[RMDB]
RNA sequence: GGGAACGACUCGAGUAGAGUCGAAAAAGCCUGUUCAUUGGGAGGCUCCAACAAUCAAUCUGCAUCAAUGUAUUCUUACAAUAUCACCCUUUAACAGGAAUGGGGUUAUCUUCAAACCUGAGAUCCAUCUGCUCAAUAGAUUCGUCUAUUGAGCAGAAAAAGAAACAACAACAACAAC
Reactivity to DMS in 0.01 (KOAc 150mM, MgCl2 10mM, bicine 150mM(pH8.5), 24C), signal-to-noise 2, nucleotides 027 to 126: a080g000c000c040u000g010u010u000c120a110u000u000g030g020g030a120g010g010c020u000c020c020a040a050c130a090a060u010c060a040a060u010c050u000g000c060a030u000c090a060a060u000g010u010a050u000u010c050u010u000a060c100a060a050u020a090u010c070a150c000c020c010u000u010u000a060a100c050a010g000g010a020a220u010g000g010g010g010u000u010a060u020c030u010u000c040a020a030a210c010c000u000g010a100g010a100u010c060c050a160
Reactivity to 2A3 in 0.01 (KOAc 150mM, MgCl2 10mM, bicine 150mM(pH8.5), 24C), signal-to-noise 2, nucleotides 027 to 126: a010g060c050c000u050g030u100u020c100a090u060u060g060g010g030a020g060g020c000u000c060c030a090a080c050a040a020u120c020a010a050u020c020u070g040c020a040u030c050a050a130u110g040u050a120u140u000c040u120u030a020c060a090a070u030a050u160c030a140c010c020c000u010u050u130a120a030c000a040g000g000a050a030u090g010g010g040g000u060u140a110u090c050u100u050c030a050a060a060c000c010u010g010a020g000a060u010c060c000a070